[RMDB]
RNA sequence: GGGAACGACUCGAGUAGAGUCGAAAAAGCGGGAGCCUGUAAGUACUUGGACACCCAGGGCAGAGGUGACGUGGAAUCCACGGAACGGGGGAAACAGUUGAGGAAGAUGGAGUACAGUGAUCAAGGAUGAGAGUCAAGAGUGGAUGGAUUCCUGAGACUCUAAUAAACCGUUCGCGGUUUAUUAGAGAAAAGAAACAACAACAACAAC
Reactivity to 2A3 in 0.01 (KOAc 150mM, MgCl2 10mM, bicine 150mM(pH8.5), 24C), signal-to-noise 2, nucleotides 027 to 156: a000g060c080g010g020g000a020g030c040c010u040g060u040a100a030g030u040a110c030u120u090g030g010a040c010a020c040c010c030a040g020g040g000c030a010g010a020g030g020u030g020a030c020g010u050g020g040a120a050u070c050c010a010c040g040g030a060a030c020g020g010g000g000g040a020a050a020c050a030g010u080u090g040a030g050g010a040a020g010a030u120g000g010a030g020u050a060c010a050g060u050g080a060u080c050a030a020g040g000a040u080g010a030g000a000g080u060c050a060a000g050a020g060u050g030g020a040u070g010g040a010u040u060c000c000u010g010a030g020a060
Reactivity to DMS in 0.01 (KOAc 150mM, MgCl2 10mM, bicine 150mM(pH8.5), 24C), signal-to-noise 1, nucleotides 027 to 156: a090g040c090g020g040g010a060g080c030c020u010g040u020a100a150g060u010a020c040u000u010g030g040a150c020a050c000c020c020a150g000g040g000c080a050g010a120g020g020u000g010a140c000g000u000g020g050a080a130u000c060c010a090c080g040g010a070a040c080g000g000g000g020g020a100a050a070c050a100g000u010u000g000a220g030g010a060a140g010a050u010g020g000a140g000u010a050c050a050g000u000g010a070u000c040a120a140g000g000a110u010g000a060g010a150g000u000c070a070a070g010a110g040u000g010g010a060u000g000g020a270u000u000c010c030u000g010a210g010a220